[RMDB]
An RNA of 177 nucleotides, treated with 2A3 and DMS and read out base by base. Conditions: 150 mM KOAc, 10 mM MgCl2 and 150 mM bicine (pH 8.5), 24 C. Source: RMDB libraries RFM100 and RFMREP, as collected in RNAgym.

RNA sequence: GGGAACGACUCGAGUAGAGUCGAAAAGUGAGUGGGGUGGUUGGCAUGGGUUGCCCAUGGGGACUCGACGCUGUGCCCACAGCCUCCUGAUGUCCUCCUCACGCAUGCCCACCCUUUACCCCGCUCCGAACAAAAGAUUUUUCGAAAUCUUUUGUUCAAAAGAAACAACAACAACAAC
Reactivity to 2A3 in 0.01 (KOAc 150mM, MgCl2 10mM, bicine 150mM(pH8.5), 24C), signal-to-noise 9, nucleotides 027 to 126: g250u210g010a010g000u010g000g010g000g010u070g010g010u010u010g000g010c010a010u010g030g070g100u100u170g060c030c060c030a080u110g000g000g000g000a000c000u010c030g010a010c030g000c010u020g020u110g100c020c040c010a010c000a000g000c000c020u090c020c080u110g020a070u230g010u010c000c000u020c000c010u070c010a020c010g130c000a000u010g000c000c000c000a000c010c000c000u030u090u070a030c000c000c000c000g000c000u000c000c020
Reactivity to DMS in 0.01 (KOAc 150mM, MgCl2 10mM, bicine 150mM(pH8.5), 24C), signal-to-noise 7, nucleotides 027 to 126: g020u040g000a010g040u010g010g000g000g040u000g010g020u000u000g000g000c030a020u000g000g000g000u010u020g010c160c080c100a130u030g000g010g000g000a010c020u010c040g000a050c300g000c010u000g010u030g010c120c080c110a300c020a010g000c000c070u000c040c200u030g010a030u030g010u000c010c020u010c000c150u000c120a050c080g000c010a010u000g010c010c000c040a030c080c010c300u010u020u030a040c000c000c000c020g010c010u000c010c120